[RMDB]
RNA sequence: GGGAACGACUCGAGUAGAGUCGAAAACAUGCCAAACCUAUAUAGCUCUUUAAGCUUUCUACUUCACCACAUUUGCAGCGGGACUGUUAAGUAAGUUAGUUUAUUUGGAGUAGAAAUUACCUCUGAAUAUGAACUUUGGAAGACUUCUAAAAGUGAAAUAUUAUUAGUGAUUCGUCACUAAUAAUAUAAAAGAAACAACAACAACAAC
Reactivity to 2A3 in 0.01 (KOAc 150mM, MgCl2 10mM, bicine 150mM(pH8.5), 24C), signal-to-noise 2, nucleotides 027 to 156: c030a020u070g030c010c000a060a020a040c020c030u060a060u020a040u060a190g050c000u030c010u080u070u060a170a010g010c000u040u030u030c030u100a030c020u030u060c050a020c120c000a050c010a190u120u060u110g020c020a030g040c000g020g090g080a080c020u030g020u080u030a010a010g050u020a110a000g000u020u060a010g020u020u100u070a050u070u010u080g000g010a020g000u080a050g110a040a130a020u100u090a050c000c000u030c030u040g000a020a000u060a060u080g010a020a030c010u060u030u000g000g010a000a000g060a100c000u080u000c080u260a110a090a010a010g020u050g070a160a090
Reactivity to DMS in 0.01 (KOAc 150mM, MgCl2 10mM, bicine 150mM(pH8.5), 24C), signal-to-noise 2, nucleotides 027 to 156: c020a170u000g020c020c010a120a120a130c050c040u010a120u010a180u000a130g000c030u000c010u010u000u020a130a160g010c060u010u030u000c060u000a080c080u000u000c030a100c040c060a100c110a120u030u000u020g040c110a060g040c080g060g020g040a260c060u000g010u010u000a030a100g040u000a080a090g010u000u000a080g000u000u000u000a010u010u020u010g040g010a080g020u000a110g010a110a200a160u020u010a060c200c060u000c010u010g010a040a040u000a030u000g010a030a040c010u000u000u000g010g010a040a100g000a050c030u020u000c030u010a020a040a060a130g010u000g010a080a130
The record gives the reactivity of an RNA of 207 nucleotides to 2A3 and DMS. DMS adducts were read by reverse transcription with MarathonRT. Conditions: 150 mM KOAc, 10 mM MgCl2 and 150 mM bicine (pH 8.5), 24 C.